[RMDB]
RNA sequence: GGGAACGACUCGAGUAGAGUCGAAAAACUUCCUACUUCGGUAGGAAGUAAAAGUAGAAAAGUUGGUGCUUAGACCACGCCCUGUACCGUAAUAAUAGAUAAACCCUUAGCACUUCGGUGCUAAGAAAUCAAGUAGCGUAUUCGUACGCUACUUGAUAAAAGAAACAACAACAACAAC
Reactivity to 2A3 in 0.01 (KOAc 150mM, MgCl2 10mM, bicine 150mM(pH8.5), 24C), signal-to-noise 3, nucleotides 027 to 126: a000c000u000u000c020c000u010a000c000u010u040c090g100g000u020a010g000g040a000a000g000u000a000a000a010a000g050u040a020g070a040a060a020a020g030u060u040g020g000u050g040c110u150u110a060g060a090c000c010a030c000g030c010c000c000u030g060u070a070c020c060g020u030a040a080u090a150a040u060a120g130a050u140a100a150a070c020c000c000u000u000a000g000c000a000c000u030u020c300g080g000u010g000c000u000a000a000g000a000a010
Reactivity to DMS in 0.01 (KOAc 150mM, MgCl2 10mM, bicine 150mM(pH8.5), 24C), signal-to-noise 4, nucleotides 027 to 126: a040c000u000u000c010c000u010a010c010u000u010c190g040g010u010a000g010g010a000a020g000u000a010a020a090a100g010u000a090g000a040a050a040a060g020u020u000g000g020u000g010c170u010u000a110g000a060c010c010a040c050g000c010c010c040u000g000u010a040c070c080g000u020a070a060u010a050a050u010a120g010a140u000a060a050a080c140c080c000u000u000a000g010c000a000c010u000u010c220g020g000u000g020c010u010a010a000g010a040a090